[RMDB]
An RNA of 177 nucleotides, treated with 2A3 and DMS and read out base by base.
RNA sequence: GGGAACGACUCGAGUAGAGUCGAAAAAGAUGUAACGAGAGUAUCCACUUGCCGCUGUAGACAAUAGCUUUAUAACACUAUUCUUAGAUUUCACUUUUACCAUAUCGGCACAUAAAUAUGGAAACAGGCCAUUAAUCGGAUUCGUCCGAUUAAUGGCAAAAGAAACAACAACAACAAC
Reactivity to 2A3 in 0.01 (KOAc 150mM, MgCl2 10mM, bicine 150mM(pH8.5), 24C), signal-to-noise 4, nucleotides 027 to 126: a030g120a030u110g030u130a050a030c070g010a010g000a000g140u040a100u020c040c000a020c010u000u040g000c010c010g000c020u020g040u050a070g060a080c040a050a110u070a070g030c040u050u110u100a160u100a130a010c070a020c040u090a150u130u040c040u080u070a130g020a240u040u110u080c050a060c060u060u030u010u040a130c000c000a010u000a010u100c110g050g080c110a000c000a040u270a110a240a010u060a090u070g010g000a060a000a010c020a030g080
Reactivity to DMS in 0.01 (KOAc 150mM, MgCl2 10mM, bicine 150mM(pH8.5), 24C), signal-to-noise 2, nucleotides 027 to 126: a020g000a110u010g000u010a030a180c100g040a240g020a090g000u010a020u050c060c000a130c020u010u000g020c020c070g020c050u000g010u000a080g030a070c150a030a070u000a000g000c140u010u000u020a080u010a030a100c120a100c070u000a030u000u000c020u010u000a070g010a040u040u030u000c050a010c030u000u000u000u030a110c000c020a000u000a000u000c100g050g000c090a050c130a000u020a080a000a040u000a060u000g000g030a130a070a070c190a160g010

For DMS the reverse transcriptase was MarathonRT. It was measured as part of the RMDB library OK1LIB.